[RMDB]
An RNA of 177 nucleotides, treated with 2A3 and DMS and read out base by base. High DMS reactivity at an A or C suggests that its Watson-Crick edge is free.
RNA sequence: GGGAACGACUCGAGUAGAGUCGAAAAAUUUUCAGGCCAUUUCUAAUUCAAUUCAAGCUAUUUAUGACCGGCUUGAUUCAAUUCAAGCCGAUCAACAAGUUGACAGAUUAAUUACUGGACGGCUUGCGAUCUAACCAAUUUUCGAAUUGGUUAGAUCAAAAGAAACAACAACAACAAC
Reactivity to 2A3 in 0.01 (KOAc 150mM, MgCl2 10mM, bicine 150mM(pH8.5), 24C), signal-to-noise 4, nucleotides 027 to 126: a020u130u100u070u090c020a010g030g000c010c010a030u110u090u020c060u070a060a060u090u070c070a020a050u000u080c030a090a040g010c020u040a070u120u150u040a090u090g010a000c010c000g000g020c000u000u010g000a010u050u060c070a150a300u040u000c000a000a000g000c000c010g010a010u020c000a010a080c020a030a010g010u030u060g040a040c020a020g030a020u060u050a050a020u020u050a070c050u070g000g050a030c000g000g020c000u010u010g010c070
Reactivity to DMS in 0.01 (KOAc 150mM, MgCl2 10mM, bicine 150mM(pH8.5), 24C), signal-to-noise 5, nucleotides 027 to 126: a120u010u000u010u010c020a040g000g000c010c010a070u000u000u010c100u010a010a020u010u010c130a020a050u000u000c080a190a120g010c020u000a040u010u000u000a110u020g010a020c010c000g020g000c000u010u000g000a010u000u010c300a070a080u010u000c000a010a000g010c000c000g010a000u000c010a040a110c220a030a020g000u000u000g010a090c160a160g000a070u000u000a030a060u000u000a030c080u010g000g010a040c220g000g010c010u000u010g010c300